[RMDB]
RNA sequence: GGGAACGACUCGAGUAGAGUCGAAAAUUAUACACCCCUUGUAUACAAUUCUUCUAAAGAAUGGUGCACAAAAUAUGGCUAUGAUCUAAAAGUUAACAUGUAUAAUGAUAAUUCUUACCACUUUUGUAAUGAAGUAAAUUUCCUCACUGACUCAGAAAACGAAAACCAAAUUCGUUUGGUUUUCGUUAAAAGAAACAACAACAACAAC
Reactivity to DMS in 0.01 (KOAc 150mM, MgCl2 10mM, bicine 150mM(pH8.5), 24C), signal-to-noise 1, nucleotides 027 to 156: u000u000a110u000a090c020a110c010c010c040c040u000u020g050u010a050u000a060c010a090a040u000u000c010u000u030c070u000a140a090a060g000a140a060u000g010g030u000g040c050a130c040a090a050a070a110u010a110u010g010g030c010u000a080u000g000a170u000c030u000a070a050a060a090g010u000u000a020a080c040a180u000g010u000a080u030a050a030u010g010a100u010a040a150u000u000c030u010u000a100c010c080a140c030u000u010u000u000g030u000a080a060u000g000a040a040g000u000a070a070a090u010u000u000c010c030u000c060a060c090u000g000a110c030u000c050a120g000a100a040
Reactivity to 2A3 in 0.01 (KOAc 150mM, MgCl2 10mM, bicine 150mM(pH8.5), 24C), signal-to-noise 3, nucleotides 027 to 156: u040u010a010u010a080c000a120c010c000c000c000u010u100g030u040a050u040a060c040a060a110u010u030c030u060u030c010u180a170a100a000g010a020a040u020g000g020u020g050c060a020c020a060a140a020a060u130a130u080g030g000c040u050a040u140g060a100u060c020u180a060a020a060a030g050u090u110a070a010c040a080u050g040u090a050u060a090a050u040g030a030u040a090a050u100u010c000u020u030a030c010c050a130c120u060u080u160u100g050u110a050a090u140g020a010a010g000u070a020a060a140u050u030u020c000c010u040c050a060c110u090g150a120c070u150c210a030g160a040a300

An RNA of 207 nucleotides, treated with DMS and 2A3 and read out base by base. Values cover nucleotides 27 to 156. 2A3 adducts were read by reverse transcription with SuperScript II with manganese. The reactions ran in a buffer of 150 mM KOAc, 10 mM MgCl2 and 150 mM bicine (pH 8.5), at 24 C.